The data come from the RNA Mapping Database (RMDB), library M2PK50.
Structure probing data (2A3 and DMS) for a 177-nucleotide construct.
The reactions ran in a buffer of 150 mM KOAc, 10 mM MgCl2 and 150 mM bicine (pH 8.5), at 24 C.
Reactivities are given for positions 27 through 126.
RNA sequence: GGGAACGACUCGAGUAGAGUCGAAAACUUAACGCGUUCGCGCGUUAAGAAACAACAUAAACAUCGAGUUGUCGAUGACACAAAUACCGUCAGUGUAGACGGAAAGCAUUCGCUUCGGCGAAUGCAACCCUUAUGAGCAGUUCGCUGCUCAUAAGGGAAAAGAAACAACAACAACAAC
Reactivity to 2A3 in 0.01 (KOAc 150mM, MgCl2 10mM, bicine 150mM(pH8.5), 24C), signal-to-noise 4, nucleotides 027 to 126: c000u000u000a000a010c000g040c000g000u020u040c180g020c010g000c000g090u000u000a000a000g000a020a040a000c040a020a010c010a080u200a130a150a010c000a020u000c000g010a030g080u130u090g200u250c000g020a010u060g060a020c010a020c020a160a150a020u210a150c010c020g010u010c010a100g110u040g190u300a070g010a000c000g000g000a080a030a000g000c000a000u000u000c000g000c000u020u100c230g110g000c010g010a000a000u010g000c000a020a000
Reactivity to DMS in 0.01 (KOAc 150mM, MgCl2 10mM, bicine 150mM(pH8.5), 24C), signal-to-noise 2, nucleotides 027 to 126: c000u000u010a010a000c010g010c000g000u000u000c270g010c020g010c000g000u000u020a000a000g000a120a110a070c150a060a030c090a060u040a120a180a220c030a030u000c010g020a040g010u010u000g020u000c000g000a010u000g000a130c150a070c190a100a040a050u000a090c000c010g000u010c010a190g010u000g020u020a080g000a000c020g000g000a070a050a100g000c000a000u000u000c000g040c010u000u000c120g040g000c000g030a010a000u000g000c000a070a050